Conditions: 150 mM KOAc, 10 mM MgCl2 and 150 mM bicine (pH 8.5), 24 C. This 207-nucleotide RNA was probed chemically with DMS and 2A3. For 2A3 the reverse transcriptase was SuperScript II with manganese. Source: RMDB library RNAMAK, as collected in RNAgym. DMS adducts were read by reverse transcription with MarathonRT.

RNA sequence: GGGAACGACUCGAGUAGAGUCGAAAACAUAGCUUUCGAGCUAUGAAAAAGCGUACUACGAGGAGGGAGCUGUUAGCUAAGACAGUCCCAAAUAGGACAAUGACGGCUAGACAGCGACGAUCUCCUCGUAUCGCAAAAAGAGCGCUUCGGCGCUCAAUGAUAGGAGAGUGUUCGCACUCUCCUAUCAAAAAGAAACAACAACAACAAC
Reactivity to DMS in 0.01 (KOAc 150mM, MgCl2 10mM, bicine 150mM(pH8.5), 24C), signal-to-noise 2, nucleotides 027 to 156: c000a020u000a010g000c000u000u000u000c270g000a050g050c000u000a020u000g000a070a060a080a120a090g030c010g020u000a080c130u000a020c010g010a040g010g010a070g020g010g010a040g020c000u000g020u000u000a040g020c010u000a110a300g010a170c040a090g010u000c020c000c000a010a060a110u000a040g020g020a060c010a160a100u010g020a180c230g000g000c010u000a070g040a020c010a000g010c000g020a090c150g000a070u010c000u000c010c010u020c000g010u000a000u000c030g030c060a090a110a100a090a110g000a030g010c000g020c010u010u010c250g040g020c000g020c000u000c000a000a040
Reactivity to 2A3 in 0.01 (KOAc 150mM, MgCl2 10mM, bicine 150mM(pH8.5), 24C), signal-to-noise 2, nucleotides 027 to 156: c000a010u010a000g000c000u070u170u160c200g100a010g000c000u000a010u030g110a130a070a040a010a000g030c010g000u040a060c100u010a000c040g000a000g020g000a000g000g000g000a040g000c000u000g010u010u000a010g000c000u040a070a070g070a090c020a060g070u020c000c000c000a090a070a050u240a020g000g010a000c030a080a170u120g020a040c030g050g000c010u050a060g040a300c000a000g000c000g090a000c000g000a020u000c000u000c020c000u010c000g000u000a000u000c000g090c000a000a020a000a000a000g000a000g010c010g000c000u060u100c250g120g000c000g000c000u020c000a010a010